Description:
An RNA of 177 nucleotides, treated with DMS and 2A3 and read out base by base. Source: RMDB library OK2TST, as collected in RNAgym. For DMS the reverse transcriptase was MarathonRT.
RNA sequence: GGGAACGACUCGAGUAGAGUCGAAAAGCACGUCGUGGCUGCCACGUGGUGGUGGCCUGUGCACCUCAUGGGCAUAUAGCUGCUGAUGCUGAGGACGUGGCUGCGAUAGUGGUACCGGCGUUGCCGCUAAGUGCCAUCUUUUCGAAGAUGGCACUUAAAAAGAAACAACAACAACAAC
Reactivity to DMS in 0.01 (KOAc 150mM, MgCl2 10mM, bicine 150mM(pH8.5), 24C), signal-to-noise 4, nucleotides 027 to 126: g020c010a010c030g020u000c080g020u010g010g020c040u000g010c010c020a030c010g020u000g020g030u000g020g030u000g000g020c010c020u010g000u010g010c040a120c040c010u010c100a140u010g030g010g040c020a070u010a110u010a070g020c060u000g050c070u000g010a100u000g010c050u000g020a090g000g010a110c060g020u000g010g020c010u000g000c040g000a070u010a170g010u010g010g010u000a050c060c030g010g000c030g010u000u010g010c020c020g000c160
Reactivity to 2A3 in 0.01 (KOAc 150mM, MgCl2 10mM, bicine 150mM(pH8.5), 24C), signal-to-noise 3, nucleotides 027 to 126: g030c010a000c020g030u020c000g060u090g060g010c020u020g010c040c010a060c120g300u300g020g070u050g000g000u010g010g000c000c000u000g020u020g000c020a190c010c010u090c070a150u230g050g030g000c070a010u120a010u020a160g050c060u080g000c050u120g070a080u120g040c070u050g010a020g070g000a030c030g060u060g040g000c010u000g000c020g070a040u040a070g070u030g000g030u040a030c020c040g020g000c070g060u050u090g020c030c010g000c020